[RMDB]
RNA sequence: GGGAACGACUCGAGUAGAGUCGAAAAGGCGGCCAUGCUCGCGGAAUAGCCCGCGAUCUCCGUCAGCUCGUGGCCCGCUGCGCGGAUACGAAAAGGUUUGGCGGGAUUGAGUCUUCGCCACUGUGAGUAGGUACUCAUAGUUCGCUAUGAGUACCUAAAAAGAAACAACAACAACAAC
Reactivity to DMS in 0.01 (KOAc 150mM, MgCl2 10mM, bicine 150mM(pH8.5), 24C), signal-to-noise 6, nucleotides 027 to 126: g010g020c030g010g000c260c080a070u000g020c070u000c050g020c010g020g000a130a130u000a150g000c180c010c030g010c040g000a020u000c040u000c020c010g000u000c060a050g010c040u000c040g020u000g010g000c040c020c020g010c010u000g010c160g000c020g010g010a090u010a050c070g010a070a070a120a120g000g000u000u000u010g020g020c010g010g000g000a060u000u000g000a130g020u030c020u000u000c030g010c000c010a080c110u010g010u000g010a120g010
Reactivity to 2A3 in 0.01 (KOAc 150mM, MgCl2 10mM, bicine 150mM(pH8.5), 24C), signal-to-noise 4, nucleotides 027 to 126: g040g000c000g040g000c040c030a060u100g020c010u000c020g000c020g040g010a100a130u150a180g120c010c020c010g000c010g000a030u010c060u010c020c010g020u020c020a000g020c000u020c050g050u040g070g020c040c030c010g000c040u120g030c060g000c010g020g030a040u040a080c060g040a040a040a080a130g130g010u130u170u060g020g000c010g000g010g000a010u020u120g080a040g040u020c010u090u110c040g070c060c040a060c080u150g050u060g030a070g110

This 177-nucleotide RNA was probed chemically with DMS and 2A3. Values cover nucleotides 27 to 126. The reactions ran in a buffer of 150 mM KOAc, 10 mM MgCl2 and 150 mM bicine (pH 8.5), at 24 C. For DMS, 8,719 sequencing reads were counted. The data come from the RNA Mapping Database (RMDB), library OK2TST.